Chemical mapping of a 177-nucleotide RNA with 2A3 and DMS. Conditions: 150 mM KOAc, 10 mM MgCl2 and 150 mM bicine (pH 8.5), 24 C. 2A3 adducts were read by reverse transcription with SuperScript II with manganese. It was measured as part of the RMDB library OK2TST. For DMS, 6,591 sequencing reads were counted.
[RMDB]
RNA sequence: GGGAACGACUCGAGUAGAGUCGAAAACUGUGGGCGAAACAGUCGUCUUGGGAUGGUGGUUAUUGAUGAAGCGCAGGUGUUGAAUGAGGAAUACAAGUUUCGGAAUUUCAGCAAUCUCAGAUAUGAGACUCAUACUUUUCUUCGGAAAAGUAUGAGUAAAAGAAACAACAACAACAAC
Reactivity to 2A3 in 0.01 (KOAc 150mM, MgCl2 10mM, bicine 150mM(pH8.5), 24C), signal-to-noise 2, nucleotides 027 to 126: c000u010g010u050g100g010g000c040g040a060a080a000c040a030g080u020c010g030u000c030u020u110g050g010g010a080u040g000g040u000g030g000u070u080a060u090u100g080a090u030g020a040a010g020c020g000c040a020g100g000u030g020u080u000g020a030a050u040g020a010g030g020a000a020u060a110c070a060a150g010u020u020u040c010g000g050a060a060u010u060u100c020a030g020c020a020a090u030c010u010c010a030g030a130u180a140u200g040a030g000
Reactivity to DMS in 0.01 (KOAc 150mM, MgCl2 10mM, bicine 150mM(pH8.5), 24C), signal-to-noise 6, nucleotides 027 to 126: c070u000g030u000g010g010g020c030g010a100a100a100c110a070g000u010c070g000u010c040u010u010g020g010g020a080u000g020g020u010g000g010u010u000a090u010u010g000a100u010g000a100a090g000c120g020c070a070g000g020u000g020u000u010g000a050a060u000g000a210g010g010a050a050u010a110c220a050a120g010u000u000u000c020g000g000a100a070u000u010u010c040a050g000c060a040a090u000c010u000c040a060g000a120u010a080u000g010a070g010